[RMDB]
RNA sequence: GGGAACGACUCGAGUAGAGUCGAAAAGUCAUUAUGUUCGCAUAAUGACAAAUAUAUGGGACUAUAAAAAACCUGAUAGCCGUCCAAGAUCAUGUAUCGGCAAAAACAGACGAUUCGUCGUCUGUAAUCUUUUUGUGUAGUUCGCUACACAAAAAGAAAAAGAAACAACAACAACAAC
Reactivity to 2A3 in 0.01 (KOAc 150mM, MgCl2 10mM, bicine 150mM(pH8.5), 24C), signal-to-noise 1, nucleotides 027 to 126: g010u010c000a000u010u020a000u030g030u010u080c230g000c090a010u000a000a010u000g000a000c010a000a070a000u090a000u010a100u040g070g000g030a060c090u020a010u240a210a090a080a000a010a050c010c000u030g070a130u080a080g010c010c000g030u000c030c020a060a010g100a150u120c100a060u110g050u130a080u110c030g000g000c040a060a000a000a000a060c000a000g010a010c010g010a010u020u070c200g030u010c030g010u000c120u000g030u000a020a050
Reactivity to DMS in 0.01 (KOAc 150mM, MgCl2 10mM, bicine 150mM(pH8.5), 24C), signal-to-noise 2, nucleotides 027 to 126: g000u000c000a000u000u000a000u010g010u000u020c270g010c020a000u000a000a020u010g000a020c000a050a050a030u010a060u010a050u000g000g000g030a060c070u000a170u040a000a120a140a080a060a070c020c040u000g000a090u000a110g010c050c000g000u010c110c070a150a140g020a070u010c080a050u000g010u000a050u000c040g000g020c090a050a010a020a100a040c000a000g010a010c000g000a020u000u030c120g010u000c000g050u000c000u000g000u000a060a030